[RMDB]
RNA sequence: GGGAACGACUCGAGUAGAGUCGAAAAUUGGCGAGUGCCUGUGGAUCUACAUUUGUUGCGGGUUCGAGACCCGUCAGAGCCCGGCUCUGUAGCUCAAUGGUAGAGCGGUGUAUUCACAUAAACUUGUAAAAGACACGUGCCUUCGGGCACGUGUCAACAAAGAAUCUUCGUUCGCGAAGAUUCUUUGAAAAGAAACAACAACAACAAC
Reactivity to 2A3 in 0.01 (KOAc 150mM, MgCl2 10mM, bicine 150mM(pH8.5), 24C), signal-to-noise 2, nucleotides 027 to 156: u090u070g130g010c000g000a020g020u050g050c000c020u030g000u000g000g020a030u000c050u100a030c010a030u050u050u260g070u060u020g030c000g000g000g020u020u020c010g010a000g010a050c000c000c010g000u010c000a010g010a020g010c150c290c170g110g000c010u000c000u000g010u020a010g000c000u000c020a040a040u190g280g020u130a010g000a000g010c030g020g000u020g000u000a020u010u050c000a010c010a020u050a010a040a010c000u010u070g030u050a070a080a050a020g010a010c020a000c000g000u000g020c010c000u090u080c250g020g000g000c000a000c000g000u000g000u000c000a000a000
Reactivity to DMS in 0.01 (KOAc 150mM, MgCl2 10mM, bicine 150mM(pH8.5), 24C), signal-to-noise 2, nucleotides 027 to 156: u010u000g010g010c040g010a030g060u000g020c020c120u020g030u010g030g020a020u010c020u000a040c000a070u010u000u010g020u000u010g010c020g010g010g030u010u000c020g010a300g000a070c000c010c010g030u000c040a060g000a140g010c090c110c100g040g020c030u000c020u000g000u000a010g040c020u020c060a070a100u000g010g000u010a120g020a040g110c010g000g010u000g000u000a110u010u000c010a030c020a060u000a110a070a040c040u000u000g000u000a040a040a120a140g020a050c010a020c030g000u000g020c010c020u010u010c300g050g040g050c030a030c010g000u010g040u000c000a010a070